[RMDB]
RNA sequence: GGGAACGACUCGAGUAGAGUCGAAAAAACAACAAUCAAAAACACAGCAGCCGCCUUUAAACUGGUGGGGCAGUGUCUAGGAUUGACGUUAGACACUGCUUUUUGCCCGUUUCAAACAGGUGAAUACAAACCGUCAUCAAGAGAAUUCUACAUCAACUAAGUGUACCCUAUUCGUAGGGUACACUUAAAAAGAAACAACAACAACAAC
Reactivity to DMS in 0.01 (KOAc 150mM, MgCl2 10mM, bicine 150mM(pH8.5), 24C), signal-to-noise 2, nucleotides 027 to 156: a030a030c020a050a020c070a130a090u000c040a070a130a140a160a050c020a100c030a070g040c060a100g020c040c050g050c000c040u000u000u000a070a050a050c070u000g020g000u000g060g000g000g030c000a010g000u000g010u000c000u000a060g020g020a240u020u000g040a110c050g020u000u000a070g000a020c000a010c010u010g000c010u000u000u000u000u000g070c000c000c040g000u100u000u020c160a100a050a100c050a070g020g020u000g020a110a110u020a300c040a050a050a030c090c020g000u000c020a060u000c080a080a170g050a180g000a060a060u010u000c050u010a070c060a080u000c050a050a120c110
Reactivity to 2A3 in 0.01 (KOAc 150mM, MgCl2 10mM, bicine 150mM(pH8.5), 24C), signal-to-noise 2, nucleotides 027 to 156: a000a010c070a010a000c010a030a060u150c060a090a040a040a060a030c080a030c010a050g050c020a000g050c010c000g020c010c020u100u100u070a060a030a010c030u010g020g020u020g010g030g020g020c000a000g000u000g010u010c000u000a040g070g060a200u060u170g060a040c070g010u010u010a000g000a000c000a000c000u000g000c000u010u020u000u030u030g000c000c000c000g000u000u060u040c100a060a060a040c030a020g020g000u040g030a030a020u090a090c040a050a050a010c040c020g050u030c020a030u010c010a020a010g070a010g080a160a090u090u130c040u240a050c030a070u300c030a030a050c030

Structure probing data (DMS and 2A3) for a 207-nucleotide construct. DMS adducts were read by reverse transcription with MarathonRT. The reactions ran in a buffer of 150 mM KOAc, 10 mM MgCl2 and 150 mM bicine (pH 8.5), at 24 C.